[RMDB]
RNA sequence: GGGAACGACUCGAGUAGAGUCGAAAAGUUUAGAAGUUCGCUUCUAAACAAAUAGAUGGUACCAAUCAACCUUAUAUGUAGGUACCCAUGUAAGGUUGACAAAAACGUCCUCGUUCGCGAGGACGAACUGAAUUAGGUUCUUCGGAACCUAAUUCAGAAAAGAAACAACAACAACAAC
Reactivity to 2A3 in 0.01 (KOAc 150mM, MgCl2 10mM, bicine 150mM(pH8.5), 24C), signal-to-noise 2, nucleotides 027 to 126: g010u000u000u000a010g000a000a020g010u040u150c170g020c100u000u000c000u000a000a010a000c000a000a180a010u120a010g210a110u110g100g060u100a080c000c000a010a040u030c000a000a000c010c000u040u000a000u010a000u020g080u100a070g230g090u150a130c000c020c000a000u010g000u000a000a000g020g000u020u000g000a030c060a000a100a020a000a030c010g000u010c000c000u010c000g050u030u040c300g000c010g090a000g000g010a000c010g010a000a000
Reactivity to DMS in 0.01 (KOAc 150mM, MgCl2 10mM, bicine 150mM(pH8.5), 24C), signal-to-noise 2, nucleotides 027 to 126: g000u000u000u000a020g000a000a000g050u000u010c300g010c000u000u000c000u010a020a020a010c000a040a120a070u000a110g010a220u000g030g000u020a170c010c000a130a210u000c000a000a020c010c000u000u000a000u000a000u000g000u000a090g010g010u000a020c160c080c010a000u020g010u000a000a000g000g030u000u030g000a020c300a030a020a040a090a090c000g000u010c000c000u000c000g020u020u030c170g060c020g020a000g020g010a000c000g000a020a050